[RMDB]
RNA sequence: GGGAACGACUCGAGUAGAGUCGAAAAACUUCACACCCUCAAAGUAGCCUUCCUGCAGUUUUGUCUGCAGGUUGUGUGGAAAGUCUGUUCCGUCAGACUUGAAACCGAUAACUGUUAGCUAUGGCAAACAAACGCUACGAUUCGUCGUAGCGUUUGUAAAAGAAACAACAACAACAAC
Reactivity to 2A3 in 0.01 (KOAc 150mM, MgCl2 10mM, bicine 150mM(pH8.5), 24C), signal-to-noise 3, nucleotides 027 to 126: a000c040u210u190c020a100c000a010c040c000c000u130c110a110a050a030g020u010a000g040c010c020u000u000c000c000u000g000c000a000g000u040u070u300u280g160u210c010u000g000c010a000g000g000u000u010g020u000g000u010g000g010a020a000a020g000u000c000u000g040u210u270c040c070g140u250c010a000g000a010c000u000u010g030a040a010a000c010c010g070a040u140a200a080c060u100g030u110u020a010g040c000u050a020u050g110g020c040a150a000
Reactivity to DMS in 0.01 (KOAc 150mM, MgCl2 10mM, bicine 150mM(pH8.5), 24C), signal-to-noise 4, nucleotides 027 to 126: a070c180u020u020c220a060c120a200c030c000c010u000c120a090a110a130g000u000a040g030c020c010u000u010c010c000u000g000c000a010g010u010u030u040u020g030u020c000u000g020c010a010g030g020u000u030g000u040g010u010g000g010a140a010a010g000u000c000u000g000u010u050c240c140g000u040c000a040g000a020c000u000u000g000a240a090a030c040c180g000a160u050a100a130c050u000g000u010u000a060g010c030u000a020u020g010g000c020a110a160